The record gives the reactivity of an RNA of 207 nucleotides to 2A3 and DMS. DMS adducts were read by reverse transcription with MarathonRT. The data come from the RNA Mapping Database (RMDB), library OK3TST. The 2A3 profile rests on 1,259 reads. Values are in units of 0.01, from 0 to 300, in steps of 10.
[RMDB]
RNA sequence: GGGAACGACUCGAGUAGAGUCGAAAAGAAAGAGCCUGAAUACGGAGAACCGUAACGCAUGACCGAAUAUUCAGCCCAGUUCACGACGUAAGUCGUGCGCCCGAGUCUUGCUCUGGGCGCUGGGGUCACGUACAUGCGUCAGGCAGGAGUAAGAGAAGGUACUGAUCGUAUUCGUACGAUCAGUACCAAAAGAAACAACAACAACAAC
Reactivity to 2A3 in 0.01 (KOAc 150mM, MgCl2 10mM, bicine 150mM(pH8.5), 24C), signal-to-noise 3, nucleotides 027 to 156: g070a020a110a000g040a000g010c040c020u020g030a130a050u070a020c030g010g050a140g180a240a240c050c010g000u030a020a040c000g030c000a000u020g020a020c040c040g090a120a060u140a190u190u120c070a120g060c000c010c000a010g000u130u210c010a000c000g020a000c040g060u170a060a100g000u010c000g020u000g020c060g010c030c000c010g010a010g050u070c090u260u290g070c000u020c060u090g000g000g020c000g000c000u010g010g010g000g040u110c040a010c050g020u100a070c010a010u000g000c000g010u020c000a010g000g000c010a000g060g030a050g060u150a130a000g020a020g010a230a050
Reactivity to DMS in 0.01 (KOAc 150mM, MgCl2 10mM, bicine 150mM(pH8.5), 24C), signal-to-noise 1, nucleotides 027 to 156: g000a080a040a170g000a220g020c030c010u000g000a110a280u020a020c040g010g010a220g030a050a220c000c000g040u000a020a300c000g030c000a060u000g020a110c090c030g000a120a070u000a200u000u010c050a160g220c000c000c010a030g030u050u000c080a040c020g030a010c000g060u000a100a140g030u000c000g030u000g030c180g000c000c000c010g000a060g000u000c090u050u030g070c070u000c010u000g030g010g000c000g000c000u020g000g000g000g000u010c140a070c060g000u030a110c040a030u000g000c000g000u000c030a040g020g020c010a060g000g000a190g000u000a050a110g000a120g020a140a210